[RMDB]
RNA sequence: GGGAACGACUCGAGUAGAGUCGAAAAAUGAUCACCCCGUCCGAUGCGGAAGUUCGUGCUUCCGUCGAACGCGAAAGUCGGACGGCGCCCAUGAGUCGCAACGCAAAGCCGCGGCAAGUGGAGUUAGAAAAGCGUUUGAAGUUCGCUUCAAACGCAACAUAGUCGAAAACUUCGGUUUUCGACUAUGAAAAGAAACAACAACAACAAC
Reactivity to 2A3 in 0.01 (KOAc 150mM, MgCl2 10mM, bicine 150mM(pH8.5), 24C), signal-to-noise 5, nucleotides 027 to 156: a000u140g010a050u120c070a070c000c010c000c000g000u010c000c000g010a010u040g010c000g000g010a010a010g010u170u300c200g150u300g070c000u000u010c000c010g000u010c010g040a160a040c090g000c020g120a120a050a020g010u000c000g000g000a000c000g000g000c020g020c000c000c000a010u030g000a000g020u010c000g000c050a070a080c060g030c100a210a200a050g080c120c080g000c020g000g020c000a000a030g000u010g010g050a150g070u100u100a030g070a060a120a030a020g000c010g000u000u030u000g000a000a000g010u050u120c150g070c190u000u000c000a000a000a000c000g000c000a000a000
Reactivity to DMS in 0.01 (KOAc 150mM, MgCl2 10mM, bicine 150mM(pH8.5), 24C), signal-to-noise 3, nucleotides 027 to 156: a140u010g020a160u010c000a120c020c010c000c000g010u000c010c010g000a040u000g020c010g010g030a060a050g030u000u000c300g010u020g020c000u000u000c010c010g040u000c010g020a100a150c150g010c090g010a140a110a110g030u000c020g000g010a050c010g000g000c010g010c050c020c000a020u000g000a300g030u000c000g030c010a030a030c020g020c030a170a140a300g020c000c010g000c020g000g020c030a030a300g020u000g010g010a170g020u000u000a160g010a080a090a090a170g010c010g010u000u010u000g010a020a000g000u000u010c300g000c020u000u010c010a000a000a000c000g020c000a010a030

An RNA of 207 nucleotides, treated with 2A3 and DMS and read out base by base.
For DMS, 4,326 sequencing reads were counted.
DMS adducts were read by reverse transcription with MarathonRT.
It was measured as part of the RMDB library M2RFPK.
Conditions: 150 mM KOAc, 10 mM MgCl2 and 150 mM bicine (pH 8.5), 24 C.
The 2A3 profile rests on 3,033 reads.
DMS (dimethyl sulfate) methylates the pairing face of unpaired adenines and cytosines.